Chemical mapping of a 207-nucleotide RNA with 2A3 and DMS. For 2A3 the reverse transcriptase was SuperScript II with manganese. The RNA was probed in 150 mM KOAc, 10 mM MgCl2 and 150 mM bicine (pH 8.5) at 24 C. It was measured as part of the RMDB library OK3TST. The DMS profile rests on 13,256 reads.
[RMDB]
RNA sequence: GGGAACGACUCGAGUAGAGUCGAAAAGUGGUCUUCAUGCCAUGAUAGGUGCUGCCAGAAUGUUUAGUAAAGAUAGUUUGCAGUUUAAGCCAGUUUCUACAACUGGUGAUGUAUUGCAGAAUUAUUAUGUGUUAUCUAGUAAUGGGUCAUAUAAGCAAGCUCUUAAUAUGUUCGCAUAUUAAGAGCUAAAAGAAACAACAACAACAAC
Reactivity to 2A3 in 0.01 (KOAc 150mM, MgCl2 10mM, bicine 150mM(pH8.5), 24C), signal-to-noise 5, nucleotides 027 to 156: g040u020g010g010u020c030u080u040c060a040u110g030c030c010a040u070g060a060u110a060g020g020u050g020c040u030g020c040c000a040g050a070a060u080g060u100u170u130a090g010u100a070a070a060g020a020u030a010g040u040u010u040g000c010a000g000u020u030u070a050a000g010c000c000a000g010u000u030u110c160u140a120c110a030a000c000u000g000g000u010g000a000u160g020u030a020u010u020g000c010a000g170a080a010u080u050a010u060u070a110u110g060u000g030u060u080a080u080c030u030a040g010u070a080a080u090g030g000g020u060c040a010u100a010u120a230a020g090c050a040
Reactivity to DMS in 0.01 (KOAc 150mM, MgCl2 10mM, bicine 150mM(pH8.5), 24C), signal-to-noise 5, nucleotides 027 to 156: g020u000g020g010u000c050u010u000c100a150u000g010c020c020a060u000g010a130u010a070g000g020u010g020c030u000g000c030c050a120g010a100a100u010g010u000u000u000a090g020u010a080a110a150g000a040u010a040g000u000u000u000g010c000a040g010u000u010u000a130a300g010c010c000a040g000u000u000u010c150u000a150c080a030a030c000u010g010g030u000g010a070u000g000u000a020u010u000g010c000a060g020a060a040u000u000a030u000u000a080u010g020u000g000u000u000a060u000c030u000a100g020u000a090a120u010g010g020g010u000c030a060u000a090u000a040a080g010c100a110